Conditions: 150 mM KOAc, 10 mM MgCl2 and 150 mM bicine (pH 8.5), 24 C. This 177-nucleotide RNA was probed chemically with DMS. For DMS, 1,148 sequencing reads were counted.
RNA sequence: GGGAACGACUCGAGUAGAGUCGAAAAGGAAGAGGCUGGCAAGGUGAGCAGGGACCAUGUUCACAGUGUUGGUCCUUACAGGAAACCUCUUGAGAGUUUUACACCAACAAGCAGUAUGAUCAGAUUAAUGGCAUACUGCUUUCGAGCAGUAUGCCAUAAAAGAAACAACAACAACAAC
Reactivity to DMS in 0.01 (KOAc 150mM, MgCl2 10mM, bicine 150mM(pH8.5), 24C), signal-to-noise 2, nucleotides 027 to 126: g010g050a040a040g010a180g030g000c000u010g000g010c040a020a030g000g010u000g000a050g030c010a030g000g000g010a090c150c140a120u000g030u000u000c070a030c140a030g010u000g000u000u000g010g010u000c000c010u010u000a060c050a060g000g010a070a120a130c050c040u000c030u010u010g010a180g010a200g000u000u000u000u000a140c070a120c030c030a060a070c090a060a050g030c000a050g000u000a030u000g010a150u000c060a080g000a130u010u000a080